[RMDB]
RNA sequence: GGGAACGACUCGAGUAGAGUCGAAAAGUUUUUAACGCGUGUGCACCCGCUAACACGAAUUACCCAGUUAUUUUCGACAUUACUCGAGUCGUUAUAGCGUGAGUUGGCGGAGUUCUCCGCGAAAUAAUCAGGUAGUGUAAUUCGUUACACUACCUGAAAAAGAAACAACAACAACAAC
Reactivity to DMS in 0.01 (KOAc 150mM, MgCl2 10mM, bicine 150mM(pH8.5), 24C), signal-to-noise 4, nucleotides 027 to 126: g020u000u010u010u020u010a030a040c140g010c020g010u000g010u000g000c070a080c050c060c050g020c040u000a060a040c020a030c030g010a100a080u000u010a090c070c060c040a130g000u000u000a070u000u000u000u000c000g010a010c000a090u000u000a010c010u000c000g010a010g010u000c000g000u000u000a010u000a060g000c030g010u010g010a070g010u010u000g010g000c020g010g000a060g010u010u010c080u000c010c010g020c020g010a030a050a050u000a070a150
The record gives the reactivity of an RNA of 177 nucleotides to DMS.
It was measured as part of the RMDB library M2PK90.
DMS adducts were read by reverse transcription with MarathonRT.
The DMS profile rests on 5,011 reads.